[RMDB]
RNA sequence: GGGAACGACUCGAGUAGAGUCGAAAAAUCCGUGGAUAUCGGGUGCUCACCGCUCCUCCUCCGGCUGUUCUCCUUCACAGCUAUGACCCAUGCGCCGCACAGGCAGUGUCCCGCUUCGUGUGCAAAAAAAACCGCCAGUACUUCGGUACUGGCGGAACAUCGUGUAAGGGUUCGCCCUUACACGAUGAAAAGAAACAACAACAACAAC
Reactivity to 2A3 in 0.01 (KOAc 150mM, MgCl2 10mM, bicine 150mM(pH8.5), 24C), signal-to-noise 1, nucleotides 027 to 156: a000u040c020c020g000u080g010g040a120u040a060u160c040g000g000g020u090g020c030u080c040a060c030c050g010c020u040c010c000u010c010c000u040c040c030g030g000c010u040g010u030u050c060u060c080c020u080u100c040a000c010a080g000c050u030a040u250g040a070c020c030c010a040u100g020c050g050c030c020g030c010a020c010a060g020g000c000a000g030u000g020u040c000c010c010g030c040u040u040c130g100u000g000u000g030c000a000a000a000a000a000a000a020a160c000c000g000c000c000a000g000u000a000c000u050u090c200g040g000u000a000c000u000g000g000c000g000g000a000a000
An RNA of 207 nucleotides, treated with 2A3 and read out base by base. 2A3 adducts were read by reverse transcription with SuperScript II with manganese. The reactions ran in a buffer of 150 mM KOAc, 10 mM MgCl2 and 150 mM bicine (pH 8.5), at 24 C. It was measured as part of the RMDB library M2RFPK.